Overview: An RNA of 207 nucleotides, treated with DMS and 2A3 and read out base by base. For 2A3 the reverse transcriptase was SuperScript II with manganese. The RNA was probed in 150 mM KOAc, 10 mM MgCl2 and 150 mM bicine (pH 8.5) at 24 C. It was measured as part of the RMDB library OK3TST. Reactivities are given for positions 27 through 156.

RNA sequence: GGGAACGACUCGAGUAGAGUCGAAAAGCCACCUUGAACUACCAGAACGACCACAGCAACUUUCUCACGUCCGUGGUGCAGAACAGCGACUACACGCCCGCCGAAGCGAGCACGCAGACCAUUAACUUGGACGACCGCUCGCGCUGGGGCGGGGACCGUGAAGAGCAUAAUUCGUUAUGCUCUUCACAAAAGAAACAACAACAACAAC
Reactivity to DMS in 0.01 (KOAc 150mM, MgCl2 10mM, bicine 150mM(pH8.5), 24C), signal-to-noise 2, nucleotides 027 to 156: g030c020c010a120c080c030u000u000g030a100a190c020u000a090c000c040a070g010a110a090c020g020a130c030c000a130c010a150g010c030a060a080c060u000u000u010c020u000c040a110c060g020u020c020c040g040u000g040g000u000g020c050a100g000a130a160c040a160g010c000g030a070c020u000a080c040a060c060g030c000c000c020g100c030c030g030a060a160g020c020g010a040g070c030a300c100g000c040a160g000a100c030c010a000u000u000a000a160c100u010u010g050g000a100c030g000a060c060c030g040c000u000c020g020c040g000c070u010g050g000g010g030c020g000g000g000g000a030c110c120
Reactivity to 2A3 in 0.01 (KOAc 150mM, MgCl2 10mM, bicine 150mM(pH8.5), 24C), signal-to-noise 4, nucleotides 027 to 156: g040c010c010a030c030c020u020u100g080a070a050c030u070a080c070c050a060g030a120a030c030g040a040c030c010a030c020a020g040c030a060a140c040u050u150u090c070u060c030a090c090g100u070c030c040g050u030g020g000u020g010c030a030g030a130a040c030a040g010c020g080a030c020u110a040c090a020c060g090c010c000c000g030c000c000g050a060a010g000c000g000a000g010c010a000c050g060c050a060g040a120c010c000a010u030u090a080a080c300u060u050g000g040a060c010g040a040c010c070g000c000u000c000g000c000g000c030u040g010g060g000g000c000g000g000g000g030a010c030c050